RNA sequence: GGGAACGACUCGAGUAGAGUCGAAAAGUUGGAUUUGGCACCAUUAUUGUCUGGAGAAACACCUGAUGCAUUGUUAGUUACCAUCAAUUAAAUGAAAGUCUGCUGGACCUAACUUUCCUUAGUGAUGGAAUUAUACUGCAUUCGUGCAGUAUAAUUCAAAAGAAACAACAACAACAAC
Reactivity to 2A3 in 0.01 (KOAc 150mM, MgCl2 10mM, bicine 150mM(pH8.5), 24C), signal-to-noise 6, nucleotides 027 to 126: g020u020u030g020g040a110u050u020u060g030g000c020a020c010c010a020u040u020a050u070u120g060u040c080u040g060g010a050g050a040a080a020c040a020c020c040u050g040a050u080g020c090a120u060u100g050u100u090a070g010u040u040a080c040c020a010u030c020a030a110u090u120a170a030a030u140g090a160a030a020g040u030c050u030g010c010u040g020g010a020c010c000u000a020a020c020u040u040u030c000c010u060u120a110g050u090g170a110u160g080
Reactivity to DMS in 0.01 (KOAc 150mM, MgCl2 10mM, bicine 150mM(pH8.5), 24C), signal-to-noise 9, nucleotides 027 to 126: g010u000u000g010g010a090u000u000u000g010g040c030a080c090c030a070u000u010a070u000u000g010u000c090u010g000g000a110g010a110a080a050c070a070c110c050u000g020a090u000g010c100a080u000u000g000u000u000a070g000u000u000a120c060c020a040u000c030a020a050u000u010a040a040a070u010g000a080a050a080g010u000c120u010g020c060u000g010g010a050c070c020u000a020a030c030u000u000u000c010c040u000u010a090g020u000g010a090u000g010
This 177-nucleotide RNA was probed chemically with 2A3 and DMS. Source: RMDB library OK2TST, as collected in RNAgym. The reactions ran in a buffer of 150 mM KOAc, 10 mM MgCl2 and 150 mM bicine (pH 8.5), at 24 C.